[RMDB]
RNA sequence: GGGAACGACUCGAGUAGAGUCGAAAACACAUACAAUCCUACCAUGGCGGUUGCUAAUGAAAAGACGACGCUUUUCGAUAGCAAGUUCAUUGUCUCAACGUCGAACAAUUACUCUGCAGGCACUGACGAACGUGUCUUCAUUCGUGAAGACACGUUCAAAAGAAACAACAACAACAAC
Reactivity to DMS in 0.01 (KOAc 150mM, MgCl2 10mM, bicine 150mM(pH8.5), 24C), signal-to-noise 2, nucleotides 027 to 126: c140a140c220a130u000a080c100a050a100u000c030c010u000a080c080c060a070u000g010g050c030g010g000u010u000g020c010u000a010a120u000g000a000a000a010a040g000a210c020g000a050c090g020c000u000u000u020u000c010g000a110u010a030g030c000a050a040g020u000u000c080a020u000u000g000u000c040u000c040a070a100c040g010u000c020g010a110a120c120a040a030u020u000a060c180u000c070u010g020c090a010g000g020c020a030c040u000g040a120c180
Reactivity to 2A3 in 0.01 (KOAc 150mM, MgCl2 10mM, bicine 150mM(pH8.5), 24C), signal-to-noise 2, nucleotides 027 to 126: c000a000c020a020u200a050c030a020a120u050c010c010u040a030c000c060a090u110g100g000c090g040g070u060u070g000c000u010a080a040u070g020a000a000a000a020g050a010c100g030a030c070g050c130u040u000u000u000c030g030a040u020a020g000c020a030a040g030u030u070c070a060u040u080g070u030c030u020c030a000a070c030g020u030c010g000a050a000c030a070a030u080u030a050c090u030c060u080g020c020a030g000g060c050a020c070u070g000a030c060
Conditions: 150 mM KOAc, 10 mM MgCl2 and 150 mM bicine (pH 8.5), 24 C. The record gives the reactivity of an RNA of 177 nucleotides to DMS and 2A3. For DMS the reverse transcriptase was MarathonRT. Values cover nucleotides 27 to 126. The 2A3 profile rests on 1,561 reads. Reactivities are rounded to 0.1 and cut off at 0 and 3.